The record gives the reactivity of an RNA of 177 nucleotides to 2A3 and DMS. For DMS, 2,371 sequencing reads were counted.
RNA sequence: GGGAACGACUCGAGUAGAGUCGAAAAGUGCGGUUCUGGGCCGACCCCGCUGUUUUCGAAACCACGGAAUACGACUUCGAAACCGUCGCCCGCCGGCUGCAAGAGAUGGCGUUCCUCAACAAGGGGCAUAGUCUGUCCGAUUCGUCGGACAGACUAUAAAAGAAACAACAACAACAAC
Reactivity to 2A3 in 0.01 (KOAc 150mM, MgCl2 10mM, bicine 150mM(pH8.5), 24C), signal-to-noise 3, nucleotides 027 to 126: g130u180g030c040g040g000u050u090c050u130g030g050g000c020c000g010a070c030c000c020c000g000c030u030g080u090u020u080u090c080g020a110a050a060c040c030a110c100g020g070a140a060u220a200c030g040a040c040u020u020c010g020a090a010a010c010c020g030u050c030g020c000c000c000g030c010c000g040g000c010u020g000c020a030a020g020a000g020a120u080g070g010c010g030u030u020c000c010u080c020a070a140c010a140a090g070g020g000g060c010
Reactivity to DMS in 0.01 (KOAc 150mM, MgCl2 10mM, bicine 150mM(pH8.5), 24C), signal-to-noise 2, nucleotides 027 to 126: g040u020g000c020g000g000u000u000c060u000g000g000g000c020c010g000a130c110c010c000c000g010c070u020g000u010u010u010u060c040g000a040a070a110c090c260a110c040g000g000a100a110u020a140c100g010a050c110u000u000c060g010a090a050a060c090c090g020u030c010g000c040c000c010g040c070c040g000g010c020u000g000c010a060a110g000a090g000a090u000g000g020c000g030u040u000c020c000u000c130a100a070c110a070a050g000g000g000g050c160

The reactions ran in a buffer of 150 mM KOAc, 10 mM MgCl2 and 150 mM bicine (pH 8.5), at 24 C.